Overview: An RNA of 177 nucleotides, treated with DMS and 2A3 and read out base by base. For DMS, 1,322 sequencing reads were counted. Source: RMDB library OK2TRN, as collected in RNAgym. Values cover nucleotides 27 to 126.
RNA sequence: GGGAACGACUCGAGUAGAGUCGAAAAUCAUGCAUGGUACCUAGGCUAGUACUGUCGUCAUGGGAUCACUGACCAUGUGUGGAUCCUAGUCCAUGUGAUCGGAUCGUACCAGUACGUACAUCAUGCAGAUCAAGAUCCGCUUCGGCGGAUCUUGAUCAAAAGAAACAACAACAACAAC
Reactivity to DMS in 0.01 (KOAc 150mM, MgCl2 10mM, bicine 150mM(pH8.5), 24C), signal-to-noise 2, nucleotides 027 to 126: u000c090a220u000g020c010a010u000g000g000u000a020c040c060u020a050g000g010c050u000a090g000u000a000c000u010g040u010c070g020u000c030a060u000g020g000g000a020u020c120a080c160u010g000a050c030c060a040u020g010u000g050u000g010g000a060u010c040c110u000a060g030u000c080c050a100u010g020u000g010a030u000c140g000g000a010u000c220g010u000a000c010c040a040g000u000a040c100g010u000a050c050a150u010c050a010u000g010c040a050
Reactivity to 2A3 in 0.01 (KOAc 150mM, MgCl2 10mM, bicine 150mM(pH8.5), 24C), signal-to-noise 2, nucleotides 027 to 126: u140c040a040u060g000c000a030u040g020g000u040a040c010c030u050a100g000g080c020u010a000g000u000a010c000u040g070u060c030g050u030c000a120u140g050g040g010a050u090c090a030c150u060g090a090c010c050a110u050g140u030g000u040g290g000a020u020c000c000u050a030g100u000c100c090a190u200g090u120g070a070u060c060g060g010a000u000c040g000u040a000c010c000a020g000u020a020c070g000u010a000c000a040u050c000a000u040g000c000a000
Reactivities are rounded to 0.1 and cut off at 0 and 3.